Source: RMDB library ARCHII, as collected in RNAgym. The record gives the reactivity of an RNA of 207 nucleotides to DMS and 2A3. High DMS reactivity at an A or C suggests that its Watson-Crick edge is free. The reactions ran in a buffer of 150 mM KOAc, 10 mM MgCl2 and 150 mM bicine (pH 8.5), at 24 C.
RNA sequence: GGGAACGACUCGAGUAGAGUCGAAAAUACAAAUUCUUACGCAUUAGCUGCCUAAAAAACAGCCUGCGUGAUCUUCACAAGAUUGUUUGCGUUUUGCUAGAAGGUCUUAUUUAUCAGCAAACUACGUUUGGCUACUGUCUAGUUAGUUAAAAAGAGACUACACACUCAACUUCGGUUGAGUGUGUAGAAAAGAAACAACAACAACAAC
Reactivity to DMS in 0.01 (KOAc 150mM, MgCl2 10mM, bicine 150mM(pH8.5), 24C), signal-to-noise 1, nucleotides 027 to 156: u010a140c040a080a070a090u000u010c100u000u010a010c000g000c010a090u000u010a080g030c020u000g000c000c010u040a000a100a140a190a110a010c000a000g040c010c150u000g000c000g040u000g000a050u000c000u010u000c050a060c020a050a060g010a060u000u000g040u010u000u010g010c020g000u000u000u010u000g010c060u020a070g000a110a060g030g040u010c050u000u000a120u010u000u020a130u000c080a120g000c040a050a060a050c020u010a070c130g010u000u010u000g000g010c020u010a010c020u000g000u000c050u010a050g010u010u000a100g010u000u020a020a050a060a050a140g000a210g010a300
Reactivity to 2A3 in 0.01 (KOAc 150mM, MgCl2 10mM, bicine 150mM(pH8.5), 24C), signal-to-noise 2, nucleotides 027 to 156: u300a010c040a020a090a020u150u050c040u090u110a020c010g000c010a040u130u170a010g000c010u010g000c000c010u030a040a020a000a000a000a000c000a000g000c030c020u000g000c010g000u000g000a000u000c010u010u010c020a030c020a020a010g000a010u060u130g030u010u020u010g010c000g010u000u000u000u050g040c030u080a070g000a010a010g000g010u010c000u050u070a230u130u110u100a230u150c040a000g000c000a000a070a000c030u040a020c040g030u000u030u010g030g000c010u010a010c020u060g180u240c060u050a060g070u130u020a010g000u030u060a050a060a000a010a010g040a000g040a020